Source information:
This 207-nucleotide RNA was probed chemically with DMS and 2A3. 2A3 adducts were read by reverse transcription with SuperScript II with manganese. For DMS, 2,063 sequencing reads were counted. Reactivities are given for positions 27 through 156. The data come from the RNA Mapping Database (RMDB), library OK3TST. DMS (dimethyl sulfate) methylates the pairing face of unpaired adenines and cytosines.
[RMDB]
RNA sequence: GGGAACGACUCGAGUAGAGUCGAAAAUGUUAACUCAGGAUCAGAUAAACCGUCUAUACAGUCUAAUUGUAAUUGGUGGUAAUGUUGCAUAACUAAAGAUCACAAAAUAAUGGGUAAAGAUUCCAUCUAGAAAUCACAUACACAUAAAUUAGACAUAGUCCAGCUAAAUAUUCGUAUUUAGCUGGACAAAAGAAACAACAACAACAAC
Reactivity to DMS in 0.01 (KOAc 150mM, MgCl2 10mM, bicine 150mM(pH8.5), 24C), signal-to-noise 2, nucleotides 027 to 156: u030g050u030u000a060a170c090u000c030a070g020g020a060u000c050a080g010a060u000a040a070a170c040c010g000u000c040u000a140u000a100c000a070g010u010c010u000a080a130u010u010g010u000a060a060u000u000g010g010u010g020g020u000a120a140u000g010u010u010g000c040a120u010a120a140c100u000a020a080a190g010a110u010c030a080c080a020a050a120a080u000a060a060u010g010g000g060u030a050a140a200g010a060u010u000c020c030a120u000c120u010a190g000a030a030a050u000c040a040c030a300u000a000c050a040c030a050u000a020a040a120u000u000a080g000a060c070a090u000a100
Reactivity to 2A3 in 0.01 (KOAc 150mM, MgCl2 10mM, bicine 150mM(pH8.5), 24C), signal-to-noise 3, nucleotides 027 to 156: u080g000u010u070a080a030c040u000c040a010g000g040a050u050c020a040g020a060u060a010a080a060c000c000g020u020c030u030a300u010a060c040a010g020u000c050u060a070a020u130u030g050u020a030a050u060u050g050g010u040g000g060u120a010a050u130g050u100u060g000c040a020u020a060a010c010u050a060a050a020g060a030u020c040a020c090a090a090a000a010u140a060a050u060g030g070g050u130a120a070a020g030a030u170u110c020c000a010u040c060u040a030g060a050a100a010u090c020a020c010a040u180a060c070a010c030a060u210a160a050a100u150u020a070g020a020c010a050u300a010